The record gives the reactivity of an RNA of 177 nucleotides to DMS. It was measured as part of the RMDB library OK2TST. For DMS the reverse transcriptase was MarathonRT. The reactions ran in a buffer of 150 mM KOAc, 10 mM MgCl2 and 150 mM bicine (pH 8.5), at 24 C.
RNA sequence: GGGAACGACUCGAGUAGAGUCGAAAAGUGGUUCUUCCCAUACCUGUACCCAUUCCCAAUCCAGGGCACGUAAUCCAACACCUGGUCAAGGAGUGCCCCCGCGAGGUUGAACCCGGUGGAGAACCGGAAUCACAACCGGGUUCGCCCGGUUGUGAUUAAAAGAAACAACAACAACAAC
Reactivity to DMS in 0.01 (KOAc 150mM, MgCl2 10mM, bicine 150mM(pH8.5), 24C), signal-to-noise 1, nucleotides 027 to 126: g020u010g000g000u000u010c050u030u010c040c010c020a160u000a070c030c050u020g000u000a100c170c060c010a100u000u010c000c000c030a180a150u020c030c020a070g010g000g000c080a040c160g010u010a130a070u010c190c100a100a050c090a130c010c010u000g000g000u000c180a160a090g000g020a050g020u000g010c000c010c010c010c050g020c130g000a020g000g000u010u010g010a030a120c090c020c020g030g010u000g010g030a100g000a160a040c020c050g010g000